[RMDB]
RNA sequence: GGGAACGACUCGAGUAGAGUCGAAAAUGCCAUGGGCGCCACGCAGGGCUUUGUGGGCUGGUGGAUGGUGCGCAGUGGCCUCCAGGACACCAAGACGGAGUGGGAUGUGCCGAGGGUGAGCCCCUACGCGUAGUUUUUGAUUCGUCAAAAACUACGCAAAAGAAACAACAACAACAAC
Reactivity to 2A3 in 0.01 (KOAc 150mM, MgCl2 10mM, bicine 150mM(pH8.5), 24C), signal-to-noise 1, nucleotides 027 to 126: u140g030c020c000a060u040g030g080g010c030g000c010c010a020c020g040c010a070g000g080g140c000u050u080u280g060u130g000g030g080c020u030g000g120u010g030g120a140u080g030g080u050g000c070g000c080a040g110u090g070g040c000c000u050c010c010a000g020g070a010c000a010c020c040a000a030g040a040c040g000g030a110g050u090g070g010g000a070u110g030u080g040c000c020g010a070g010g040g030u040g030a050g060c000c010c000c020u030a030c040
Reactivity to DMS in 0.01 (KOAc 150mM, MgCl2 10mM, bicine 150mM(pH8.5), 24C), signal-to-noise 2, nucleotides 027 to 126: u010g010c010c010a060u010g020g030g000c040g020c020c030a050c060g010c070a130g010g030g000c030u020u010u000g030u020g010g010g030c030u010g010g040u010g000g010a100u010g010g010u010g010c060g010c040a140g020u000g000g010c010c070u020c020c060a060g010g000a130c030a050c060c060a060a120g020a100c070g020g020a150g020u010g000g010g040a050u010g010u010g030c070c020g000a110g010g010g000u010g010a070g010c060c000c020c070u000a020c180